[RMDB]
An RNA of 177 nucleotides, treated with DMS and 2A3 and read out base by base. The 2A3 profile rests on 8,889 reads. As a SHAPE reagent, 2A3 marks flexible, mostly unpaired nucleotides at the ribose 2'-OH.

RNA sequence: GGGAACGACUCGAGUAGAGUCGAAAAGAUAUGGAUACGGUAUCAUCAGCAACAGCUCGGAAACGAGACAUGCUGGUACCCGUAUCCUAAGUCAAAAGUUCAAGUAAAGUUCGCUUUACUUGAACAACUAGAUUUAAUUCUUCGGAAUUAAAUCUAGAAAAGAAACAACAACAACAAC
Reactivity to DMS in 0.01 (KOAc 150mM, MgCl2 10mM, bicine 150mM(pH8.5), 24C), signal-to-noise 4, nucleotides 027 to 126: g010a040u010a300u000g000g010a020u000a000c000g010g020u000a090u000c160a010u000c020a000g010c010a020a070c260a170g020c000u000c000g010g000a090a080a190c000g000a010g000a030c110a130u010g000c010u000g010g010u000a030c300c000c000g010u000a000u000c000c000u000a010a090g010u000c030a080a040a100a090g010u000u000c000a010a000g010u000a000a010a010g000u000u020c230g010c000u000u000u000a000c000u000u000g000a000a010c000a050a110
Reactivity to 2A3 in 0.01 (KOAc 150mM, MgCl2 10mM, bicine 150mM(pH8.5), 24C), signal-to-noise 3, nucleotides 027 to 126: g020a010u050a030u140g000g000a000u000a000c010g000g030u050a090u250c060a010u020c000a070g000c010a010a110c020a180g060c010u000c000g000g060a080a060a030c010g010a000g050a060c020a030u080g000c010u010g000g000u010a020c000c000c000g000u000a000u000c000c000u000a010a020g030u000c030a030a050a060a160g000u010u010c010a000a000g000u000a010a000a000g010u030u110c210g060c100u000u000u010a000c000u010u000g000a000a010c000a000a000